This 207-nucleotide RNA was probed chemically with 2A3.
RNA sequence: GGGAACGACUCGAGUAGAGUCGAAAAAAGCUGUUCGAAAUGGUAACUGUUCGCAUUAUAUUUUAACCUCGUUUCGUUGGAUGAAGUCGGCGACGUAAUGGCAUUCGAUCGGGUUCUCGAUACCCGCCAGCACCUCGCAGCGACCGUUAUUCAGUAGGGCAGUAGUAUGAUUCGUCAUACUACUGCCAAAAGAAACAACAACAACAAC
Reactivity to 2A3 in 0.01 (KOAc 150mM, MgCl2 10mM, bicine 150mM(pH8.5), 24C), signal-to-noise 1, nucleotides 027 to 156: a000a030g020c020u010g000u020u000c020g030a050a070a180u070g100g000u030a050a030c040u060g090u100u020c010g000c070a010u110u050a070u140a020u160u150u090u100a060a080c000c020u080c070g000u010u000u000c050g010u010u020g050g000a020u030g070a040a020g010u020c020g030g010c010g010a000c000g000u020a030a000u030g030g000c050a030u110u080c160g040a100u140c030g020g000g000u090u020c120u020c060g010a020u050a070c030c000c000g000c000c000a050g000c000a030c000c010u000c010g000c030a050g030c010g000a000c000c000g000u010u010a070u070u070c010a030g120u080a050g120

2A3 adducts were read by reverse transcription with SuperScript II with manganese. Source: RMDB library OK3TST, as collected in RNAgym.